[RMDB]
RNA sequence: GGGAACGACUCGAGUAGAGUCGAAAAGCCGCUAACGCAAUUGCUACCUCUGGCAUAACAAGUAUAUCGGGUAAGGGUUUCUGUUCCGCACACGCAGACGCAGAGUAUCGUUAAGAUGUCCAUAUUGCAAUUAUCCUGUCUUCGGACAGGAUAAUUGAAAAGAAACAACAACAACAAC
Reactivity to DMS in 0.01 (KOAc 150mM, MgCl2 10mM, bicine 150mM(pH8.5), 24C), signal-to-noise 3, nucleotides 027 to 126: g020c020c100g030c050u000a080a100c110g020c060a150a040u000u000g020c040u000a100c050c020u000c050u000g010g020c050a080u010a090a100c170a080a070g010u020a070u010a070u010c040g000g000g000u000a070a080g000g000g000u000u000u000c030u000g000u000u000c020c020g010c040a070c130a080c130g020c060a070g000a060c130g000c040a040g000a080g000u010a050u010c050g010u000u010a080a090g030a070u000g000u010c020c040a010u000a120u000u000g010
Reactivity to 2A3 in 0.01 (KOAc 150mM, MgCl2 10mM, bicine 150mM(pH8.5), 24C), signal-to-noise 1, nucleotides 027 to 126: g060c030c000g000c100u090a110a010c030g000c050a090a130u040u100g040c000u080a090c010c010u000c050u040g030g010c000a030u060a140a040c060a060a060g070u050a090u030a010u170c010g010g000g090u100a060a070g100g090g000u000u090u070c000u000g040u040u000c030c030g000c010a020c010a020c050g040c040a020g000a070c020g000c030a010g020a020g090u060a010u060c010g020u070u060a060a030g020a080u070g060u000c030c020a110u080a070u070u260g060
Chemical mapping of a 177-nucleotide RNA with DMS and 2A3.
It was measured as part of the RMDB library RFMREP.
2A3 is a SHAPE reagent: it acylates the 2'-hydroxyl of flexible nucleotides of all four kinds.
The reactions ran in a buffer of 150 mM KOAc, 10 mM MgCl2 and 150 mM bicine (pH 8.5), at 24 C.